[RMDB]
RNA sequence: GGGAACGACUCGAGUAGAGUCGAAAACAAAGGAGGGCUGCUGCCCGAAGGGAGGUGAUGGGGAUAUCUCCGUUCCAGCCCUGUCAGCGGCCGGGGGAUGGUUUUUUUCUGGUUCGAGUGUCGUGGCUGAUGGUGGGAGCUGCUGAGCAGGAGGAGGACAAUAAAUGUUGUUCGCAACAUUUAUUGUAAAAGAAACAACAACAACAAC
Reactivity to 2A3 in 0.01 (KOAc 150mM, MgCl2 10mM, bicine 150mM(pH8.5), 24C), signal-to-noise 4, nucleotides 027 to 156: c030a020a090a030g090g040a050g030g030g000c030u090g040c080u080g010c080c040c030g030a010a010g020g010g020a050g000g040u200g040a050u070g000g010g000g020a010u060a060u180c020u000c010c000g020u060u010c030c000a020g020c040c000c010u000g040u040c010a010g040c010g000g000c000c000g040g000g000g000g020a050u050g010g090u050u000u000u020u000u100u090c060u070g050g010u080u120c050g030a060g050u070g020u060c060g020u050g030g000c030u030g010a070u060g040g060u020g010g010g000a030g000c020u030g000c030u050g020a020g020c020a040g010g010a000g010g020a010g030g010
Reactivity to DMS in 0.01 (KOAc 150mM, MgCl2 10mM, bicine 150mM(pH8.5), 24C), signal-to-noise 1, nucleotides 027 to 156: c050a090a120a100g000g010a090g000g020g010c020u030g020c080u010g020c030c000c030g040a060a070g000g010g040a270g020g000u010g000a090u010g000g010g000g010a130u000a080u000c020u020c000c010g030u000u000c060c010a130g010c030c010c020u000g010u000c020a050g000c030g020g020c070c030g010g020g040g000g050a110u000g000g010u000u000u010u000u000u000u000c040u010g030g010u000u000c080g000a120g030u000g020u000c030g020u010g010g030c000u010g020a050u000g000g010u000g010g020g000a090g020c070u010g050c020u010g000a060g030c060a080g020g000a070g000g020a090g010g000

An RNA of 207 nucleotides, treated with 2A3 and DMS and read out base by base.
For DMS, 3,331 sequencing reads were counted.
Values cover nucleotides 27 to 156.
For DMS the reverse transcriptase was MarathonRT.
Source: RMDB library OK3TST, as collected in RNAgym.
2A3 adducts were read by reverse transcription with SuperScript II with manganese.